[RMDB]
RNA sequence: GGGAACGACUCGAGUAGAGUCGAAAAGAUAUGGAGAGUUGCUGCCUAUGCAUCGAUCUCGGAAACGAGGGAGCAUAGGAACUACAGUUAACUCUCCUAAGUCAAAACGCUGUGUUCGCACAGCGAAUCUAUAUUGACAGUUCGCUGUCAAUAUAGAAAAAGAAACAACAACAACAAC
Reactivity to DMS in 0.01 (KOAc 150mM, MgCl2 10mM, bicine 150mM(pH8.5), 24C), signal-to-noise 9, nucleotides 027 to 126: g000a030u000a300u000g010g000a010g010a020g020u000u000g010c010u000g000c010c000u000a000u000g000c010a300u010c140g000a050u010c010u000c000g010g000a120a090a140c010g010a010g000g000g000a030g010c000a010u000a000g000g000a020a010c080u010a300c010a000g010u010u010a010a010c000u000c010u000c000c000u000a000a040g000u010c040a100a080a090a120c030g010c000u000g010u000g000u000u010c190g030c010a010c010a010g010c010g000a030a050
Reactivity to 2A3 in 0.01 (KOAc 150mM, MgCl2 10mM, bicine 150mM(pH8.5), 24C), signal-to-noise 9, nucleotides 027 to 126: g010a020u060a020u140g000g000a010g000a000g000u010u010g010c000u010g010c000c000u020a000u010g000c020a240u300c050g080a150u030c010u000c010g030g020a090a060a030c010g000a010g000g030g000a010g000c000a000u010a010g000g030a000a010c030u180a020c010a010g010u140u300a010a000c000u000c000u000c000c000u000a010a000g020u000c020a010a030a060a090c020g000c000u000g000u010g050u110u090c290g040c100a000c000a000g000c000g000a000a000